Conditions: 150 mM KOAc, 10 mM MgCl2 and 150 mM bicine (pH 8.5), 24 C. This 177-nucleotide RNA was probed chemically with DMS and 2A3. DMS adducts were read by reverse transcription with MarathonRT.
RNA sequence: GGGAACGACUCGAGUAGAGUCGAAAAUAUGUUAAAUAGUUAUGGAGGAUAUCUUCAUUAUGAUGUCUAUUAUGUUCCUACUGAACAAGGUGCAACAGUUUUUGUAGCAGAUGUUGCAAUUGAAGGAGUGUCUAAGUAACUUCGGUUACUUAGACACAAAAGAAACAACAACAACAAC
Reactivity to DMS in 0.01 (KOAc 150mM, MgCl2 10mM, bicine 150mM(pH8.5), 24C), signal-to-noise 3, nucleotides 027 to 126: u010a040u000g000u010u000a030a060a060u000a120g020u010u010a020u000g010g010a030g010g020a210u000a060u010c000u000u000c050a070u000u000a030u020g010a090u010g010u000c030u000a060u010u010a050u000g000u000u010c000c000u000a080c100u000g040a090a140c050a030a040g000g030u010g000c020a010a010c010a040g010u000u000u010u010u000g010u010a080g030c150a070g020a100u000g000u000u000g000c000a030a080u010u010g010a120a130g010g000a190
Reactivity to 2A3 in 0.01 (KOAc 150mM, MgCl2 10mM, bicine 150mM(pH8.5), 24C), signal-to-noise 3, nucleotides 027 to 126: u050a000u020g020u030u080a170a060a010u100a150g030u080u070a010u020g000g040a050g060g070a200u070a140u300c000u050u030c020a020u010u140a020u140g090a050u120g040u040c020u010a090u050u010a110u170g030u020u010c000c010u030a110c040u080g040a120a050c020a020a000g240g040u060g080c000a010a010c010a020g020u040u010u060u180u300g210u170a060g070c140a060g010a210u040g000u000u000g000c000a040a040u020u030g070a070a040g120g060a090